This 177-nucleotide RNA was probed chemically with DMS and 2A3.
Reactivities are given for positions 27 through 126.

RNA sequence: GGGAACGACUCGAGUAGAGUCGAAAACGUGCCAUGUUCGCAUGGCACGAAAUAAAGGAAACAGGAUGGCAUCGGCGCACGAUGUAACAAGCGCAAAAUAAAAAACAUUUCACUUCGGUGAAAUGAACAGAGUACUUUUCUUCGGAAAAGUACUCUGAAAAGAAACAACAACAACAAC
Reactivity to DMS in 0.01 (KOAc 150mM, MgCl2 10mM, bicine 150mM(pH8.5), 24C), signal-to-noise 1, nucleotides 027 to 126: c010g040u010g000c000c020a020u010g000u010u010c180g060c020a000u010g010g000c000a000c000g000a010a060a080u020a060a140a140g000g020a030a090a060c060a060g000g000a060u010g000g040c020a020u000c060g010g020c040g010c040a040c020g010a070u010g010u010a080a030c170a100a190g000c060g020c090a060a110a040a020u030a020a050a060a060a080a090c020a010u000u020u000c000a000c010u000u000c140g010g000u000g000a000a000a000u000g000a080a220
Reactivity to 2A3 in 0.01 (KOAc 150mM, MgCl2 10mM, bicine 150mM(pH8.5), 24C), signal-to-noise 1, nucleotides 027 to 126: c000g020u000g000c010c000a010u020g020u050u050c210g000c110a000u000g010g000c020a010c000g000a000a000a000u090a010a050a010g120g020a080a080a020c070a080g080g000a060u070g030g000c000a010u010c020g050g000c010g020c080a080c130g030a000u050g030u070a010a020c040a050a010g020c020g000c010a050a050a070a050u240a050a140a010a000a000a010c000a010u030u000u000c010a030c010u030u050c090g060g000u000g020a000a000a000u000g000a040a000
Annotation: Source: RMDB library M2PK50, as collected in RNAgym.